[RMDB]
RNA sequence: GGGAACGACUCGAGUAGAGUCGAAAAGCAAAAGUGUUGCGGACCUGCGUAGUUUCGAAAAGCGGACGGCCACGACGGCCCUUUGGGUGGGGUUGCAGCCGUAGCGCAUCGCAAAGACGCCGAGGUCGUGCUACUAAAAGUUCGCUUUUAGUAGCACAAAAGAAACAACAACAACAAC
Reactivity to DMS in 0.01 (KOAc 150mM, MgCl2 10mM, bicine 150mM(pH8.5), 24C), signal-to-noise 2, nucleotides 027 to 126: g010c050a050a020a140a180g000u000g020u000u000g000c030g020g010a060c000c010u000g000c000g010u000a030g000u010u010u000c000g000a010a010a140a040g030c030g000g010a020c010g000g000c000c030a100c030g000a300c020g010g020c000c010c010u000u000u010g040g040g040u020g010g020g000g000u000u000g030c000a300g000c000c000g030u000a090g000c000g000c000a040u000c010g010c100a030a040a030g000a010c020g010c010c300g000a050g020g030u000c030
Reactivity to 2A3 in 0.01 (KOAc 150mM, MgCl2 10mM, bicine 150mM(pH8.5), 24C), signal-to-noise 2, nucleotides 027 to 126: g030c030a020a010a040a140g170u180g040u120u040g020c050g060g000a010c010c010u000g000c020g010u030a040g100u010u010u010c020g020a040a010a000a030g000c010g000g010a000c000g000g000c000c010a120c080g180a040c020g060g030c000c010c000u090u200u180g300g000g080u200g010g040g000g000u010u030g020c020a010g000c000c020g010u000a000g000c000g000c020a020u000c000g000c040a010a020a020g010a000c020g000c070c090g130a030g000g050u030c020